RNA sequence: GGGAACGACUCGAGUAGAGUCGAAAAGAUAUGGAGCAGUAAGGCCUUGGAUUUAUGGGUCUGUGAUGCUAUCGGAAACGAUAGUGCAUGGCCCAUUGUCAGGCUAUCUGCUCCUAAGUCAAACAUAUUCGAGAGUGUUCGCACUCUCGAAUAUGAACAAGGGCGCAUGAUUCGUCAUGCGCCCUUGAAAAGAAACAACAACAACAAC
Reactivity to 2A3 in 0.01 (KOAc 150mM, MgCl2 10mM, bicine 150mM(pH8.5), 24C), signal-to-noise 2, nucleotides 027 to 156: g030a000u090a010u190g000g000a000g000c010a000g010u150a300a170g060g050c050c010u160u250g150g000a120u290u300u190a000u070g030g000g020u030c100u040g020u020g060a240u160g020c000u000a000u000c000g030g010a080a010a030c040g010a000u000a010g010u020g020c000a010u050g000g000c020c020c010a000u010u010g000u000c020a000g000g000c000u020a020u020c000u000g000c000u010c000c000u000a000a000g000u000c000a000a030a020c000a000u000a000u000u000c000g000a000g000a000g000u000g020u100u120c210g050c080a000c010u000c000u020c000g000a000a000u000a000u000g000a000a000
Notes:
The record gives the reactivity of an RNA of 207 nucleotides to 2A3. Conditions: 150 mM KOAc, 10 mM MgCl2 and 150 mM bicine (pH 8.5), 24 C. The data come from the RNA Mapping Database (RMDB), library RNAMAK. 2A3 adducts were read by reverse transcription with SuperScript II with manganese.